[RMDB]
RNA sequence: GGGAACGACUCGAGUAGAGUCGAAAACGCGAAUGCCCGCUUCGCUGAAGACAAUGCAGCUCUGGUUUUUUAUUAAUUCCGAUGAGAGGUUUUUCAUUUCUCUUAUCUCAAAACGAAAUGAAAUGCGAGGGUGGUAAUUAUUCGUAAUUACCACCCUAAAAGAAACAACAACAACAAC
Reactivity to DMS in 0.01 (KOAc 150mM, MgCl2 10mM, bicine 150mM(pH8.5), 24C), signal-to-noise 3, nucleotides 027 to 126: c150g000c050g000a020a030u010g000c060c000c040g000c300u010u010c020g010c020u000g020a090a050g000a060c090a070a060u020g000c100a040g000c020u000c030u000g000g010u000u000u000u000u000u080a050u090u050a040a100u000u000c070c050g010a090u020g010a080g010a040g020g010u000u040u000u000u010c020a030u000u000u030c000u010c040u010u010a050u020c090u010c090a040a030a050a110c220g000a060a030a010u000g000a040a030a070u090g000c090g000
Reactivity to 2A3 in 0.01 (KOAc 150mM, MgCl2 10mM, bicine 150mM(pH8.5), 24C), signal-to-noise 4, nucleotides 027 to 126: c040g020c000g020a060a010u080g050c000c030c010g020c010u020u040c010g020c060u050g040a070a030g020a070c070a080a020u130g030c010a040g000c020u020c020u080g000g040u000u000u020u020u000u080a180u100u170a110a070u080u020c010c030g020a040u110g030a040g000a010g020g050u040u030u040u010u010c020a010u000u020u000c000u000c000u040u060a100u060c050u030c060a070a070a010a040c060g040a020a000a010u020g000a010a010a060u110g040c070g040